[RMDB]
RNA sequence: GGGAACGACUCGAGUAGAGUCGAAAAUGACUGGUGCUGUACGUAGUCACUUUUCAGUUGACAGAUUCCAAGUGAUGUCAACGACAGCACAACUUGUUAAGUCAGUGACUGGGAUGCCAAUAGAAAGAUUGCCUGUUGGUAUGGCUUCUAAAACAAAGAUUAGUACCGCUUUCGAGCGGUACUAAUCAAAAGAAACAACAACAACAAC
Reactivity to DMS in 0.01 (KOAc 150mM, MgCl2 10mM, bicine 150mM(pH8.5), 24C), signal-to-noise 2, nucleotides 027 to 156: u000g000a040c010u000g030g040u010g010c010u000g000u010a120c000g030u000a240g010u010c000a060c010u000u020u010u000c050a130g010u010u010g010a150c090a130g000a140u000u020c080c080a040a090g000u000g020a090u000g020u000c020a070a080c020g030a060c010a020g000c000a010c000a080a090c050u010u000g020u010u000a060a090g020u000c000a110g030u000g000a140c040u010g050g020g000a080u000g000c010c030a060a050u000a070g020a090a020a100g000a150u000u000g010c050c030u000g010u000u010g000g050u000a080u010g030g030c000u000u000c020u010a030a060a070a160c130a110a100a220
Reactivity to 2A3 in 0.01 (KOAc 150mM, MgCl2 10mM, bicine 150mM(pH8.5), 24C), signal-to-noise 4, nucleotides 027 to 156: u120g020a020c040u060g060g000u010g020c010u010g010u120a160c040g050u070a030g020u010c010a010c000u120u070u060u130c090a120g010u040u050g060a020c040a040g090a110u210u080c060c040a030a030g030u020g060a050u010g070u160c100a040a010c020g000a000c000a000g000c010a000c000a000a100c080u100u130g050u090u160a020a020g020u000c100a020g010u000g060a010c030u020g030g030g030a040u030g010c020c000a020a010u060a030g100a040a110a010g140a170u100u130g040c010c000u020g010u070u010g010g010u010a030u020g040g000c000u050u040c060u140a100a110a060a040c070a070a070a120